[RMDB]
RNA sequence: GGGAACGACUCGAGUAGAGUCGAAAAGAUAUGGAUUCAGGGAGAGCGAUGUCGGAAACGACAUUGCUCGAAGAACUGACUGUCCUAAGUCAAAACAGACUCGUUGUCUUCGGACAACGAGUCUGAACCUACACGCUAACUUCGGUUAGCGUGUAGGAAAAGAAACAACAACAACAAC
Reactivity to DMS in 0.01 (KOAc 150mM, MgCl2 10mM, bicine 150mM(pH8.5), 24C), signal-to-noise 1, nucleotides 027 to 126: g000a060u000a240u000g010g000a030u000u000c010a000g000g010g010a210g030a010g030c000g000a020u000g010u000c000g000g000a150a050a220c010g000a000c030a000u000u000g030c000u000c010g000a030a080g000a190a080c020u000g030a020c300u000g000u000c010c000u000a040a150g000u010c030a090a080a100a280c040a000g000a010c020u010c000g000u000u030g010u000c000u000u000c130g030g030a010c000a010a010c000g000a010g010u000c000u000g010a020a060